[RMDB]
RNA sequence: GGGAACGACUCGAGUAGAGUCGAAAAUUGUGGUCAAGACCUUGGCGUAGUAUCCAAGGUUGUCAAGGUUCCUAUUGACUUAACAAUGAUUGAGUUUAUGUUUUGGUGUAAGGAUGGACAGGGGAAACAAAGCGUUAGAUUUCGAUCUAACGCUUUGAAAAGAAACAACAACAACAAC
Reactivity to 2A3 in 0.01 (KOAc 150mM, MgCl2 10mM, bicine 150mM(pH8.5), 24C), signal-to-noise 2, nucleotides 027 to 126: u020u020g030u030g050g010u040c010a010a000g010a010c000c000u000u010g000g000c040g050u120a060g090u060a150u100c060c010a050a000g000g050u030u020g000u020c020a010a020g050g000u060u110c000c000u050a110u020u030g010a000c000u030u090a080a010c040a060a110u080g020a180u070u130g040a070g120u000u090u040a080u100g110u000u060u060u060g050g000u050g020u030a090a060g060g000a040u080g000g030a000c020a010g010g010g000g000a000a030a050
Reactivity to DMS in 0.01 (KOAc 150mM, MgCl2 10mM, bicine 150mM(pH8.5), 24C), signal-to-noise 7, nucleotides 027 to 126: u000u000g040u000g000g000u000c040a060a100g000a030c000c000u000u000g010g000c210g000u010a150g010u000a110u000c040c040a030a040g000g010u000u000g010u010c080a050a070g000g010u000u000c070c090u010a130u000u000g000a020c010u020u010a080a030c040a040a040u000g000a140u010u000g010a100g000u010u010u000a060u010g010u000u000u010u000g010g000u010g010u000a050a080g010g010a060u000g010g010a040c050a070g000g000g010g010a110a080a180